Annotation
The data come from the RNA Mapping Database (RMDB), library TTRDEL. The record gives the reactivity of an RNA of 177 nucleotides to 2A3 and DMS. For DMS the reverse transcriptase was MarathonRT. Conditions: 150 mM KOAc, 10 mM MgCl2 and 150 mM bicine (pH 8.5), 24 C.

RNA sequence: GGGAACGACUCGAGUAGAGUCGAAAAGAUAUGGAUACUUGACGACCAACAGCUCGGAAACGAGACAUGGUCGGUCACGGGUAUCCUAAGUCAAACCGUUAGUGAUGGUUCGCCAUCACUAACGGAACGUUAUUAGUGUGUUCGCACACUAAUAACGAAAAGAAACAACAACAACAAC
Reactivity to 2A3 in 0.01 (KOAc 150mM, MgCl2 10mM, bicine 150mM(pH8.5), 24C), signal-to-noise 9, nucleotides 027 to 126: g030a020u080a020u190g010g000a000u010a010c010u030u050g070a060c020g010a000c010c010a040a110c070a150g020c000u000c000g030g030a070a080a050c010g010a010g050a030c040a150u090g020g000u020c010g010g010u040c050a010c080g050g000g000u000a000u000c000c000u010a140a010g060u030c050a050a040a110c010c000g000u000u000a010g000u000g000a010u010g030g070u050u090c300g050c070c000a000u000c000a000c000u000a000a000c000g000g000a020a000
Reactivity to DMS in 0.01 (KOAc 150mM, MgCl2 10mM, bicine 150mM(pH8.5), 24C), signal-to-noise 9, nucleotides 027 to 126: g010a040u000a300u010g000g000a010u000a000c000u010u000g010a130c030g010a000c000c000a030a070c240a170g010c000u010c000g000g010a100a070a210c000g010a010g000a030c090a130u000g000g010u000c010g010g000u010c070a090c300g010g000g000u000a010u000c000c000u010a020a090g010u000c040a100a080a190c000c000g010u000u000a000g010u000g010a020u000g000g010u000u010c270g020c000c000a000u000c000a010c000u000a000a000c000g000g000a010a020